[RMDB]
Chemical mapping of a 177-nucleotide RNA with DMS and 2A3. DMS adducts were read by reverse transcription with MarathonRT.
RNA sequence: GGGAACGACUCGAGUAGAGUCGAAAAUGUUGGUAUCUCUGGUGUAUACUUUGCACUGACCUGCAUAGUUAAAGUAUACUUGAAAUCAUUAGUUUUUUUCACUUCUAUUUUCCAAUCACAGAAAUAGUACGUAUCCAAUAUUCGUAUUGGAUACGUAAAAAGAAACAACAACAACAAC
Reactivity to DMS in 0.01 (KOAc 150mM, MgCl2 10mM, bicine 150mM(pH8.5), 24C), signal-to-noise 3, nucleotides 027 to 126: u020g010u010u000g000g020u000a070u010c010u010c060u000g020g010u000g010u010a030u000a020c010u000u000u000g020c090a030c030u000g000a080c140c170u000g010c030a080u020a030g000u010u060a030a050a040g030u010a010u000a010c010u000u000g020a040a090a070u000c080a090u000u000a120g010u000u000u000u000u000u000u000c060a060c150u000u010c000u000a020u000u010u010u000c030c040a060a120u040c140a090c200a090g020a040a060a070u000a020g000
Reactivity to 2A3 in 0.01 (KOAc 150mM, MgCl2 10mM, bicine 150mM(pH8.5), 24C), signal-to-noise 6, nucleotides 027 to 126: u180g010u040u040g050g030u090a130u020c060u000c010u080g050g030u050g020u010a010u000a020c000u020u030u030g050c070a010c050u070g070a120c020c050u080g030c040a070u110a070g020u050u110a090a030a000g030u000a020u010a080c000u040u070g080a060a090a030u100c120a130u090u160a090g060u040u010u010u010u000u040u090c080a060c050u070u000c000u040a060u040u050u050u050c020c060a090a110u110c040a060c020a100g060a040a030a010u040a020g040